[RMDB]
RNA sequence: GGGAACGACUCGAGUAGAGUCGAAAAGAUAUGGAUACUUGGCCAAGUCCGAUAGGGACAUGCUCUGCCCUCGGAAACGAGGGUUGAGCAACAGCCCUGAUCGGACUUGGCCAAGUAUCCUAAGUCAUCGUCUUAUAACGUUCGCGUUAUAAGACGAAAAAGAAACAACAACAACAAC
Reactivity to DMS in 0.01 (KOAc 150mM, MgCl2 10mM, bicine 150mM(pH8.5), 24C), signal-to-noise 1, nucleotides 027 to 126: g020a070u010a300u000g010g010a020u000a000c000u000u000g000g020c040c010a000a020g010u000c000c010g010a000u010a040g000g000g000a050c040a200u000g010c010u010c000u000g000c000c000c020u000c000g000g000a100a080a300c000g010a020g010g040g020u000u010g000a020g000c000a000a020c300a170g000c010c000c000u000g000a020u000c000g020g010a000c010u000u000g000g000c000c010a000a000g010u000a000u000c000c000u000a010a060g010u000c040a210
An RNA of 177 nucleotides, treated with DMS and read out base by base.
For DMS the reverse transcriptase was MarathonRT.
Conditions: 150 mM KOAc, 10 mM MgCl2 and 150 mM bicine (pH 8.5), 24 C.
Reactivities are given for positions 27 through 126.
The DMS profile rests on 1,802 reads.